[RMDB]
RNA sequence: GGGAACGACUCGAGUAGAGUCGAAAAGCACUGCAGGGUCCACCCUGACUGGGGCACAGAAUCCAGAAGCCCACUCGGCCCUGGCAGUGCCAUCCUAGGCUCUGAGGUGGUAAACUGAGCUGGGCAGGAUGCGUAAUCCUUUCGAGGAUUACGCAUCAAAAGAAACAACAACAACAAC
Reactivity to DMS in 0.01 (KOAc 150mM, MgCl2 10mM, bicine 150mM(pH8.5), 24C), signal-to-noise 2, nucleotides 027 to 126: g010c000a020c000u000g010c000a050g030g010g020u000c030c050a040c040c020c300u030g000a150c040u000g020g000g010g000c030a120c260a230g000a120a050u000c020c030a040g000a300a180g000c000c000c040a050c040u000c070g020g030c010c050c000u000g000g010c030a000g010u000g010c000c000a090u000c040c020u020a070g000g040c120u030c090u010g020a050g010g010u000g000g000u000a070a020a070c020u000g000a020g000c150u000g010g000g020c060a230g000
Reactivity to 2A3 in 0.01 (KOAc 150mM, MgCl2 10mM, bicine 150mM(pH8.5), 24C), signal-to-noise 2, nucleotides 027 to 126: g020c010a000c020u010g000c010a000g020g010g010u080c000c010a010c000c000c020u020g050a050c010u020g000g000g010g070c180a070c050a270g300a300a030u050c040c000a020g000a140a010g000c000c000c020a020c020u010c010g000g000c030c000c000u030g190g000c010a000g000u010g030c000c000a010u030c000c000u050a070g030g090c070u090c090u290g180a110g000g000u000g000g000u050a010a040a030c070u160g000a000g000c170u000g000g000g020c010a010g120